[RMDB]
RNA sequence: GGGAACGACUCGAGUAGAGUCGAAAAGUAGGACGGGCGGCGCUCGACCGCCAAGACGAAGGCUGACAUAUGGUCGAGCAGAUUUUCGCCGAGCUGCGCGGCCAUGAUGGUGGCCACGACCAUGACAACCUUACGCCCUUUUCGAAGGGCGUAAGGUAAAAGAAACAACAACAACAAC
Reactivity to DMS in 0.01 (KOAc 150mM, MgCl2 10mM, bicine 150mM(pH8.5), 24C), signal-to-noise 1, nucleotides 027 to 126: g030u000a160g000g010a220c300g010g020g000c000g010g010c060g010c130u020c140g020a140c000c020g000c010c010a000a060g000a260c020g000a030a090g020g010c000u000g020a070c090a030u070a060u020g000g020u000c000g020a050g000c010a000g000a060u000u000u000u000c160g000c130c060g010a080g010c010u000g030c000g000c010g000g020c000c000a010u000g000a010u010g010g000u000g000g040c020c010a040c020g010a170c000c040a140u030g000a110c150a090
Conditions: 150 mM KOAc, 10 mM MgCl2 and 150 mM bicine (pH 8.5), 24 C.
Chemical mapping of a 177-nucleotide RNA with DMS.
Values cover nucleotides 27 to 126.
Source: RMDB library OK2TST, as collected in RNAgym.